Chemical mapping of a 177-nucleotide RNA with DMS and 2A3. Source: RMDB library TTRDEL, as collected in RNAgym.
[RMDB]
RNA sequence: GGGAACGACUCGAGUAGAGUCGAAAAGAUAUGGACACACCGAAUCUAGGGUUCGGAAACGAACCUAGACAUGUGGUGUAAAGAGUGUCCUAAGUCAAAGCUGUGGUGCCUUCGGGCACCACAGCAAGAAUUACUAGACGUUCGCGUCUAGUAAUUCAAAAGAAACAACAACAACAAC
Reactivity to DMS in 0.01 (KOAc 150mM, MgCl2 10mM, bicine 150mM(pH8.5), 24C), signal-to-noise 4, nucleotides 027 to 126: g000a050u000a270u000g000g010a030c010a050c010a060c010c010g000a220a130u000c000u000a020g010g010g010u000u000c010g020g010a030a050a140c010g000a010a040c000c000u000a000g010a030c170a060u010g040u020g020g030u000g010u020a050a070a130g010a200g020u000g010u000c000c000u000a070a100g010u000c030a070a110a140g000c000u010g020u000g040g020u000g000c000c000u000u010c270g030g000g020c000a010c000c000a000c000a000g020c000a000a020
Reactivity to 2A3 in 0.01 (KOAc 150mM, MgCl2 10mM, bicine 150mM(pH8.5), 24C), signal-to-noise 2, nucleotides 027 to 126: g010a010u090a040u120g000g000a010c010a010c000a000c020c000g050a060a080u010c000u030a040g300g080g050u050u010c000g030g000a020a040a010c010g000a010a000c000c000u010a000g020a020c070a080u240g160u230g090g050u070g040u130a030a090a030g250a030g060u070g010u000c000c010u010a070a010g070u050c060a100a080a040g000c020u000g000u000g010g020u020g000c000c010u050u070c300g020g000g030c020a030c020c020a010c000a020g000c000a000a000

The 2A3 profile rests on 3,729 reads. Values cover nucleotides 27 to 126.